[RMDB]
RNA sequence: GGGAACGACUCGAGUAGAGUCGAAAAAGCUGCUCAGUAUACGUACUGAGCAGCAAGGGGUUGAAGCGGACACCCCUUCGGGCGCGCGCCCAAGCUCCGUACGCCGCCUCAUACGUGAGGCGGCGAAAUAGGUGUAUCUGGUUCGCCAGAUACACAAGACGUGUCAAUAGUUCGCUAUUGACACGUCAAAAGAAACAACAACAACAAC
Reactivity to 2A3 in 0.01 (KOAc 150mM, MgCl2 10mM, bicine 150mM(pH8.5), 24C), signal-to-noise 1, nucleotides 027 to 156: a000g000c000u000g000c000u000c010a000g010u010a070u030a060c150g000u020a000c040u000g000a010g000c010a000g000c010a000a000g010g000g000g000u000u110g190a200a030g000c000g000g000a000c000a000c000c000c000c000u030u150c020g000g000g010c080g000c080g020c020g020c080c000c000a000a000g050c110u000c000c000g000u000a020c010g000c020c000g000c000c020u020c000a070u070a120c230g020u030g000a020g010g000c000g000g020c000g000a000a000a000u080a000g120g020u000g010u010a000u000c000u000g000g030u020u020c070g050c100c000a020g000a000u000a000c000a000c000a000a010
Source: RMDB library M2RFPK, as collected in RNAgym. The record gives the reactivity of an RNA of 207 nucleotides to 2A3. For 2A3, 965 sequencing reads were counted.